[RMDB]
RNA sequence: GGGAACGACUCGAGUAGAGUCGAAAAACGGGCAGUGGCGAUGGCAACGCGGCAGCCGCAGGGUCGACUUCUUCGCAGCCGCAACAGACGGGAUACGGGCAAAGAGGGGAGCUCGUUCUGUUGGAAGCCAUAGGGUCCCUUUCGAGGGACCCUAUGGAAAAGAAACAACAACAACAAC
Reactivity to 2A3 in 0.01 (KOAc 150mM, MgCl2 10mM, bicine 150mM(pH8.5), 24C), signal-to-noise 3, nucleotides 027 to 126: a010c050g020g040g000c020a050g040u040g070g080c050g050a120u070g060g000c040a020a070c030g010c000g050g000c040a010g020c010c060g010c040a030g030g030g030u040c030g070a090c030u040u010c010u030u010c050g020c030a040g010c000c010g010c010a010a000c010a010g030a010c030g000g020g030a030u110a120c050g000g010g000c030a060a080a040g060a070g020g010g020g000a020g010c030u000c020g030u050u000c010u030g000u000u000g020g050a050a020g060
Reactivity to DMS in 0.01 (KOAc 150mM, MgCl2 10mM, bicine 150mM(pH8.5), 24C), signal-to-noise 2, nucleotides 027 to 126: a080c080g010g000g030c140a100g010u050g010g020c040g030a080u030g000g000c020a050a150c100g000c090g000g060c030a040g000c120c070g000c120a010g010g000g000u000c070g010a010c090u010u000c040u000u010c050g040c030a090g030c050c000g000c080a040a040c070a110g060a180c090g000g030g000a140u010a040c080g040g000g000c140a070a070a040g060a070g000g020g000g000a110g000c000u010c010g040u000u000c020u020g000u030u020g000g000a030a080g020